An RNA of 177 nucleotides, treated with DMS and 2A3 and read out base by base. DMS adducts were read by reverse transcription with MarathonRT. The reactions ran in a buffer of 150 mM KOAc, 10 mM MgCl2 and 150 mM bicine (pH 8.5), at 24 C. The DMS profile rests on 4,837 reads.
RNA sequence: GGGAACGACUCGAGUAGAGUCGAAAAGAUAUGGAGCCAGAACUACAGCGGAAGCUCCGAAGAACUCGGAAACGAGGGAGGAGAUAACGCUGCUGGCUCCUAAGUCAAAGGGUCCUUCGGGACCCAACAAUGGAGAAAGGUUCGCCUUUCUCCAUUGAAAAGAAACAACAACAACAAC
Reactivity to DMS in 0.01 (KOAc 150mM, MgCl2 10mM, bicine 150mM(pH8.5), 24C), signal-to-noise 5, nucleotides 027 to 126: g010a060u000a300u000g000g010a010g020c000c000a000g000a130a040c100u010a300c010a020g010c000g010g010a110a230g000c000u000c000c000g010a080a120g030a120a280c000u000c000g000g000a130a060a170c000g010a020g000g000g000a110g010g000a020g000a010u000a100a200c010g020c000u000g000c000u000g000g000c010u010c000c000u000a010a080g000u000c020a070a120a160g000g000g000u000c000c000u000u000c170g010g000g000a000c000c000c000a030a020
Reactivity to 2A3 in 0.01 (KOAc 150mM, MgCl2 10mM, bicine 150mM(pH8.5), 24C), signal-to-noise 2, nucleotides 027 to 126: g010a030u080a040u200g000g010a000g020c020c000a000g010a070a080c190u260a090c200a010g000c010g010g040a140a170g010c000u010c010c010g030a050a030g010a010a000c000u000c010g010g030a060a070a060c000g000a010g000g000g010a030g010g010a020g000a010u050a100a020c000g000c020u000g020c010u000g000g020c000u000c000c000u000a020a010g000u000c000a010a000a090g010g000g000u010c000c000u000u030c170g120g020g000a000c000c000c010a000a000